[RMDB]
RNA sequence: GGGAACGACUCGAGUAGAGUCGAAAAAAAAAGAUAUGGACGGUAGUAGAGCUUGGAUUUAUGGGAAACGUAUAUCGGAAACGAUAUACUAUCCCAUUGUCAGCUCGAAACCGUCCUAAGUCAAAAACGAAUAAAAUAGGUUCGCCUAUUUUAUUCGAAAAGAAACAACAACAACAAC
Reactivity to 2A3 in 0.01 (KOAc 150mM, MgCl2 10mM, bicine 150mM(pH8.5), 24C), signal-to-noise 1, nucleotides 027 to 126: a040a020a000a010a000g050a040u110a080u080g000g000a000c010g000g050u020a020g030u000a010g030a000g070c070u120u150g240g010a120u290u300u250a020u080g000g010g010a030a130a040c090g020u000a000u000a000u030c010g010g010a020a110a070c010g000a000u000a000u000a000c000u000a010u010c000c010c000a000u020u000g000u010c000a000g000c020u020c010g010a000a020a000c000c000g000u000c000c000u000a010a000g000u000c000a000a020a000a080a110
Reactivity to DMS in 0.01 (KOAc 150mM, MgCl2 10mM, bicine 150mM(pH8.5), 24C), signal-to-noise 2, nucleotides 027 to 126: a040a040a080a130a090g000a030u000a300u000g000g000a010c010g000g010u000a090g000u000a100g010a000g030c000u000u020g030g020a040u000u010u000a000u030g010g020g000a020a080a170c300g000u000a000u010a000u010c000g010g000a150a100a210c000g000a000u000a000u000a000c000u000a300u000c010c000c000a000u000u000g000u000c020a060g000c000u010c020g010a070a150a100c020c000g000u000c000c000u000a000a080g000u020c010a070a090a040a110a160